RNA sequence: GGGAACGACUCGAGUAGAGUCGAAAACCGUAGGAUCAAUUCGGGGUUGCCCAAUCUUGGAUUUACAAAUUCGAAAGAGUUUGUUGUCAGAUUGGGAACUACAACAAGUGUUGAUCCUAAACGGAAAGACAGCGUUAACUUCGGUUAACGCUGUCAAGGAACGCUAGUGGUUCGCCACUAGCGUUCCAAAAGAAACAACAACAACAAC
Reactivity to 2A3 in 0.01 (KOAc 150mM, MgCl2 10mM, bicine 150mM(pH8.5), 24C), signal-to-noise 1, nucleotides 027 to 156: c000c000g020u000a000g000g010a000u000c010a060a020u070u020c050g010g030g090g010u000u050g120c020c000c000a000a000u040c040u090u130g100g000a060u240u270u160a000c000a000a000a010u020u000c000g010a150a010a040g000a050g000u000u010u000g000u000u000g010u030c020a000g000a010u000u010g000g000g060a000a000c020u180a050c010a160a010c000a180a130g010u020g030u040u000g000a000u040c000c000u010a080a030a010c040g050g030a080a070a060g000a000c000a010g000c000g000u000u000a000a000c030u030u120c230g100g000u000u000a000a000c000g000c000u000g000u000c000a000a000
The data come from the RNA Mapping Database (RMDB), library RNAMAK. Structure probing data (2A3) for a 207-nucleotide construct. For 2A3, 1,080 sequencing reads were counted. The reactions ran in a buffer of 150 mM KOAc, 10 mM MgCl2 and 150 mM bicine (pH 8.5), at 24 C.